This 177-nucleotide RNA was probed chemically with DMS and 2A3.
Reactivities are given for positions 27 through 126.
RNA sequence: GGGAACGACUCGAGUAGAGUCGAAAAGAGACAGUCAAUAGGUUGACUCUGUGAAUUAAAUGUUAUUGACUGUCUAGUAUGGUAAGUGUCAUUGUCAUGACACUUACCAUAAUGAUAGAGUCAACCAGGUUGUGCUUGUUUUCGAACGAGCACAACCAAAAGAAACAACAACAACAAC
Reactivity to DMS in 0.01 (KOAc 150mM, MgCl2 10mM, bicine 150mM(pH8.5), 24C), signal-to-noise 3, nucleotides 027 to 126: g000a010g000a000c000a010g000u000c000a000a000u000a060g010g000u000u010g010a020c000u020c000u010g000u000g020a160a080u040u040a040a080a120u040g000u040u010a020u000u000g010a010c000u000g000u010c000u000a050g020u000a010u010g000g010u000a010a010g000u000g010u000c000a020u010u010g020u040c280a130u000g000a000c000a000c000u000u000a000c010c000a000u000a000a070u040g000a120u020a040g010a020g000u010c010a010a000c010c040a150
Reactivity to 2A3 in 0.01 (KOAc 150mM, MgCl2 10mM, bicine 150mM(pH8.5), 24C), signal-to-noise 9, nucleotides 027 to 126: g140a000g000a000c000a000g000u000c000a010a010u050a120g010g000u000u000g010a000c000u000c000u020g080u080g140a070a090u180u200a130a110a100u290g090u270u090a020u020u010g000a000c000u000g000u000c000u000a010g030u000a000u000g010g000u000a000a000g000u000g000u000c010a020u060u280g200u230c120a010u020g000a000c000a000c000u000u000a000c000c010a000u000a000a000u010g010a010u030a010g000a000g000u000c000a000a000c000c000a000
For DMS, 7,366 sequencing reads were counted. The RNA was probed in 150 mM KOAc, 10 mM MgCl2 and 150 mM bicine (pH 8.5) at 24 C. 2A3 is a SHAPE reagent: it acylates the 2'-hydroxyl of flexible nucleotides of all four kinds.